This 177-nucleotide RNA was probed chemically with DMS and 2A3. The data come from the RNA Mapping Database (RMDB), libraries RFM100 and RFMREP.
[RMDB]
RNA sequence: GGGAACGACUCGAGUAGAGUCGAAAAGGAACCGGUUUUGGGAUAAAGACAUGCACGAAAACAAAAGUUUAAAGCGUGUCGUGUGUGUAUGAUAACAAGCGACAUGCUUUAGGUUUAUUUUGCAGCGUUAAAGUUUUUGUUUCGACAAAAACUUUAAAAAAGAAACAACAACAACAAC
Reactivity to DMS in 0.01 (KOAc 150mM, MgCl2 10mM, bicine 150mM(pH8.5), 24C), signal-to-noise 8, nucleotides 027 to 126: g000g000a110a120c040c020g010g010u000u000u010u000g010g010g010a130u020a060a100a100g000a100c070a060u010g000c020a080c150g010a040a040a050a090c130a060a070a040a070g000u020u010u000a010a000a010g000c000g020u000g000u000c000g010u010g000u020g010u000g010u030a090u040g010a130u030a080a020c020a040a170g000c000g010a010c000a000u000g000c000u000u000u000a000g000g000u010u000u010a090u010u010u010u000g000c060a060g000c100g010
Reactivity to 2A3 in 0.01 (KOAc 150mM, MgCl2 10mM, bicine 150mM(pH8.5), 24C), signal-to-noise 5, nucleotides 027 to 126: g050g010a020a020c040c010g010g010u060u030u040u090g100g000g030a060u130a110a170a010g080a030c030a050u070g010c020a010c080g100a060a030a080a010c080a010a110a020a050g020u020u040u040a010a000a010g000c000g000u000g000u010c020g000u040g000u000g000u000g010u070a120u250g180a070u090a200a020c040a090a010g020c000g010a010c000a000u000g000c000u000u010u000a010g000g000u050u030u020a140u030u100u070u050g050c050a040g030c000g050